RNA sequence: GGGAACGACUCGAGUAGAGUCGAAAAGAUAUGGACCGGUGGUUAAAAGGCGAAGAACUAGGUCGGAAACGACCUAGGGAGCCUCCACCCGGUCCUAAGUCAAAGAGUGGAACUUCGGUUCCACUCAUCUAUGAUUCGAGUUCGCUCGAAUCAUAGAAAAAGAAACAACAACAACAAC
Reactivity to 2A3 in 0.01 (KOAc 150mM, MgCl2 10mM, bicine 150mM(pH8.5), 24C), signal-to-noise 3, nucleotides 027 to 126: g000a010u020a000u020g000g000a010c010c020g010g050u050g000g120u240u200a290a300a300a260g010g000c060g300a300a000g020a020a010c000u000a010g000g020u010c020g000g000a020a040a000c000g000a010c000c020u000a010g020g010g030a000g000c010c020u020c000c000a020c000c030c000g010g000u000c000c000u000a010a000g020u000c030a110a080a160g000a010g010u020g000g010a010a000c010u040u090c300g080g020u010u020c000c000a000c000u000c000a000
Reactivity to DMS in 0.01 (KOAc 150mM, MgCl2 10mM, bicine 150mM(pH8.5), 24C), signal-to-noise 2, nucleotides 027 to 126: g010a030u000a060u000g000g000a010c000c020g040g020u000g000g020u040u020a080a050a140a110g020g000c010g000a080a160g000a080a300c010u010a010g010g000u000c000g000g000a010a020a050c000g000a020c000c000u010a010g000g000g000a010g010c000c000u000c010c000a020c080c060c060g010g010u000c000c000u000a000a040g020u000c010a100a060a150g020a000g010u020g010g010a010a010c000u000u050c230g030g010u000u000c000c000a000c000u000c000a010
Conditions: 150 mM KOAc, 10 mM MgCl2 and 150 mM bicine (pH 8.5), 24 C. This 177-nucleotide RNA was probed chemically with 2A3 and DMS. For 2A3 the reverse transcriptase was SuperScript II with manganese. For DMS, 2,373 sequencing reads were counted. Values are in units of 0.01, from 0 to 300, in steps of 10.